[RMDB]
Chemical mapping of a 207-nucleotide RNA with 2A3 and DMS. For DMS the reverse transcriptase was MarathonRT. For DMS, 2,452 sequencing reads were counted. It was measured as part of the RMDB library M2RFOK. The reactions ran in a buffer of 150 mM KOAc, 10 mM MgCl2 and 150 mM bicine (pH 8.5), at 24 C.

RNA sequence: GGGAACGACUCGAGUAGAGUCGAAAAAGUCAGAGGGCGAUACCAUGCAAACUAGGGCUGGCUACUCUUGCACAGAAUCACAUCUCGAUAAUUGUCAGUGCAAGAAGGACAAUUAUACCAUUUAAUGAAAACGUUUACCUGUUCGCAGGUAAACGAAGAGAAGGAUGAUGUUCGCAUCAUCCUUCUCAAAAGAAACAACAACAACAAC
Reactivity to 2A3 in 0.01 (KOAc 150mM, MgCl2 10mM, bicine 150mM(pH8.5), 24C), signal-to-noise 4, nucleotides 027 to 156: a000g030u030c030a000g030a040g070g050g010c050g030a020u040a120c050c010a050u140g030c040a050a110a100c070u150a040g010g090g000c000u020g010g000c010u050a060c000u000c000u000u000g000c000a000c010a020g140a070a050u180c040a050c020a210u050c080u070c110g040a010u020a030a010u020u010g010u000c020a020g000u010g010c010a000a000g010a010a010g010g000a000c010a010a010u050u020a020u040a100c020c040a120u130u190u240a160a120u170g110a020a030a020a030c010g000u000u000u000a000c000c000u010g010u020u070c210g000c070a000g000g000u010a000a000a000c000g000a020a010
Reactivity to DMS in 0.01 (KOAc 150mM, MgCl2 10mM, bicine 150mM(pH8.5), 24C), signal-to-noise 2, nucleotides 027 to 156: a120g000u010c050a080g000a100g000g000g060c060g030a190u000a070c080c050a050u030g000c020a060a100a160c070u000a050g020g020g010c020u000g000g020c050u000a110c020u000c040u000u010g000c080a030c040a070g020a120a120u000c050a090c060a090u000c090u000c050g020a080u000a020a060u000u000g020u000c030a300g000u010g000c030a060a000g000a070a080g000g030a040c010a040a040u000u020a050u000a100c130c070a170u000u020u020a090a130u010g010a040a080a050a070c000g030u000u000u000a010c000c000u000g000u000u000c260g100c030a010g020g040u020a010a010a010c000g000a020a060